Description: Chemical mapping of a 177-nucleotide RNA with 2A3 and DMS. Reactivities are given for positions 27 through 126. The 2A3 profile rests on 1,174 reads. For DMS, 2,726 sequencing reads were counted. The RNA was probed in 150 mM KOAc, 10 mM MgCl2 and 150 mM bicine (pH 8.5) at 24 C.
[RMDB]
RNA sequence: GGGAACGACUCGAGUAGAGUCGAAAAGAAGUUGGGAGAAGUGUUAAAUGUGUUUGUGCGCCCGGAUGUUCGCACGUAUGUAUGCUUGUUCGUACACGUACAAGCAUGUGUAAGUAUAUGCAUACAUGUCCGAUAAAUGAUUCGUCAUUUAUCGGACAAAAGAAACAACAACAACAAC
Reactivity to 2A3 in 0.01 (KOAc 150mM, MgCl2 10mM, bicine 150mM(pH8.5), 24C), signal-to-noise 1, nucleotides 027 to 126: g100a050a000g070u160u070g010g000g020a080g010a040a060g060u050g030u080u150a060a150a130u100g030u030g060u130u110u050g010u020g010c020g010c000c020c070g050g060a080u080g020u110u090c040g040c000a000c120g040u090a010u070g030u030a030u000g000c000u000u040g000u010u010c000g000u040a020c090a000c050g080u110a050c110a200a120g110c040a050u060g010u000g000u000a020a020g050u000a040u000a010u140g010c000a000u020a040c030a010u100
Reactivity to DMS in 0.01 (KOAc 150mM, MgCl2 10mM, bicine 150mM(pH8.5), 24C), signal-to-noise 2, nucleotides 027 to 126: g010a070a100g020u010u000g010g020g000a050g010a050a070g020u010g000u000u000a060a070a080u000g020u000g020u000u000u000g000u000g020c050g020c050c030c060g020g000a100u000g000u000u000c100g020c050a050c080g000u000a010u000g000u000a010u000g000c000u000u000g020u000u000c030g020u010a040c120a030c070g000u000a090c160a040a060g000c160a020u000g010u000g020u020a010a050g000u000a030u000a010u000g000c010a040u000a020c030a080u000